[RMDB]
RNA sequence: GGGAACGACUCGAGUAGAGUCGAAAAUUUGAUGGUGAUGGGAACGGCGCUAGCAACAAACAUAUUUUAUGUACCUCACGUGUUUGACUUAAUCAUUUACUGGUUAAAGUCUGUUCAGUGCAAUCGUCAAAUAAAUCAUGUUCGCAUGAUUUAUUUGAAAAGAAACAACAACAACAAC
Reactivity to 2A3 in 0.01 (KOAc 150mM, MgCl2 10mM, bicine 150mM(pH8.5), 24C), signal-to-noise 7, nucleotides 027 to 126: u070u030u080g060a060u050g020g030u040g010a060u080g010g020g030a080a040c030g040g000c010g000c040u030a020g000c020a010a060c020a040a140a010c020a040u080a110u070u150u080u110a060u080g030u030a050c020c000u040c020a050c050g040u050g030u060u250u070g010a000c000u000u010a010a010u000c000a020u100u160u180a140c130u020g020g010u010u030a100a040a020g000u000c020u030g040u060u060c050a050g020u010g050c010a020a090u070c040g050u000
Reactivity to DMS in 0.01 (KOAc 150mM, MgCl2 10mM, bicine 150mM(pH8.5), 24C), signal-to-noise 8, nucleotides 027 to 126: u000u010u000g010a070u000g010g020u000g010a090u000g010g010g000a080a090c130g010g010c040g010c050u000a050g010c060a050a080c130a050a080a060c040a030u000a060u010u010u010u000a040u010g010u010a130c060c030u000c080a040c100g020u010g010u000u000u000g000a050c020u000u000a010a010u000c000a010u000u010u010a080c220u000g000g010u000u000a030a030a070g010u000c020u000g010u010u000c060a090g010u000g000c130a070a100u010c110g010u000